[RMDB]
RNA sequence: GGGAACGACUCGAGUAGAGUCGAAAAAGACUGAUAGGGUCAGUAGAUUCUGCUUGAUAUAGGCAGAAUCAAUCAGGAAUCAGUUCAAUAAUGGUCCAGUAGAGGACGUAGAUUAAUACGUCCUCAAGAAUAUUUGAUUUUUCGAAAUCAAAUAUUCAAAAGAAACAACAACAACAAC
Reactivity to DMS in 0.01 (KOAc 150mM, MgCl2 10mM, bicine 150mM(pH8.5), 24C), signal-to-noise 5, nucleotides 027 to 126: a170g010a020c000u000g010a010u000a060g000g020g020u000c060a070g020u010a140g000a020u000u000c000u000g000c020u000u000g000a190u040a170u050a020g000g000c010a000g000a000a000u000c000a060a070u020c060a150g020g000a110a050u000c010a010g000u010u020c080a060a090u030a080a100u020g010g000u020c010c010a110g000u010a080g010a010g000g000a010c000g010u000a010g000a170u050u050a090a100u010a000c000g010u000c000c000u000c000a020a030
Reactivity to 2A3 in 0.01 (KOAc 150mM, MgCl2 10mM, bicine 150mM(pH8.5), 24C), signal-to-noise 6, nucleotides 027 to 126: a000g010a000c000u000g030a000u080a110g200g090g110u100c080a030g090u130a070g030a000u010u010c000u000g020c000u060u110g100a080u180a070u220a300g020g000c000a000g000a000a010u000c000a000a010u050c000a000g070g050a010a000u000c000a000g000u090u040c030a010a020u100a100a080u130g080g000u020c010c010a030g040u090a030g050a000g010g000a000c000g020u010a010g010a060u080u160a100a060u030a030c000g000u010c000c000u000c000a000a000
The record gives the reactivity of an RNA of 177 nucleotides to DMS and 2A3.
DMS (dimethyl sulfate) methylates the pairing face of unpaired adenines and cytosines.
DMS adducts were read by reverse transcription with MarathonRT.
For 2A3, 7,316 sequencing reads were counted.